[RMDB]
RNA sequence: GGGAACGACUCGAGUAGAGUCGAAAAGGAAUGAAUGGGCUGACCAAGAGGAUUAGAAAAGAGAUUCAGCACUUCCACCUGGUUUGGCUCUAGCCCUGGUUUGCAGUGACUAAGAGUUGUCACCUAGACAUCUGUUUGUAGGGCAGAGUGAGACAAAACUGAGCUUUUACUUCGGUAAAAGCUCAGUAAAAGAAACAACAACAACAAC
Reactivity to 2A3 in 0.01 (KOAc 150mM, MgCl2 10mM, bicine 150mM(pH8.5), 24C), signal-to-noise 2, nucleotides 027 to 156: g060g010a090a040u110g010a060a030u060g040g080g010c040u080g030a080c030c040a010a060g020a050g100g080a170u070u210a240g110a180a100a040a010g090a040g010a050u120u020c020a010g020c050a070c010u070u030c020c000a090c010c060u070g050g060u060u020u140g030g000c000u000c000u000a020g000c020c000c030u060g060g000u000u020u060g010c050a020g000u010g060a040c030u080a160a070g020a120g150u150u160g040u060c010a020c000c010u030a030g020a040c040a040u070c120u030g110u080u120u070g100u070a010g000g000g040c020a000g010a000g020u010g020a080g010a040c020a000a070a040